[RMDB]
RNA sequence: GGGAACGACUCGAGUAGAGUCGAAAAAGCCUGUGUGUCAGCCCAGCACUUGCUGCGUGGGAGGUGCAUUCCGGACGGACGCGUAUGGUCAGGUCUAGCAGCGUUAGUUCUUUGAGUCGGUACACCUCAGGGCGCAUGUUCCAGAGGGUAGCAAGGGCAUCAUAGUGACCUUCGGGUUAUUGUGAUGAAAAGAAACAACAACAACAAC
Reactivity to 2A3 in 0.01 (KOAc 150mM, MgCl2 10mM, bicine 150mM(pH8.5), 24C), signal-to-noise 4, nucleotides 027 to 156: a010g060c020c020u020g020u010g000u010g020u060c050a040g040c030c010c000a010g010c020a030c020u070u130g010c040u030g000c030g110u080g020g070g010a020g000g010u040g020c020a050u150u000c030c020g000g050a020c000g020g000a030c010g050c020g050u090a160u210g060g000u100c060a060g000g080u030c050u020a040g020c060a000g000c010g000u000u080a030g010u010u020c000u050u030u130g040a040g020u020c010g020g000u030a010c020a060c020c010u010c020a020g020g080g000c020g000c040a050u180g030u090u040c010c000a030g020a050g070g010g010u030a020g030c060a050a060g020g010g020
Reactivity to DMS in 0.01 (KOAc 150mM, MgCl2 10mM, bicine 150mM(pH8.5), 24C), signal-to-noise 3, nucleotides 027 to 156: a120g010c020c010u000g040u000g020u000g000u010c030a150g000c000c040c010a230g000c040a040c040u000u000g010c080u010g020c050g030u000g020g000g000a040g020g000u010g000c040a130u010u000c030c060g020g000a070c020g030g030a030c030g020c030g010u000a140u010g020g000u000c050a150g010g010u000c040u000a130g020c070a140g020c020g000u010u000a080g020u010u000c030u000u000u000g010a100g030u010c010g010g000u000a040c020a040c030c010u000c020a080g000g010g000c020g020c070a080u000g000u000u010c030c010a100g000a140g000g000g010u010a060g020c040a060a090g020g010g000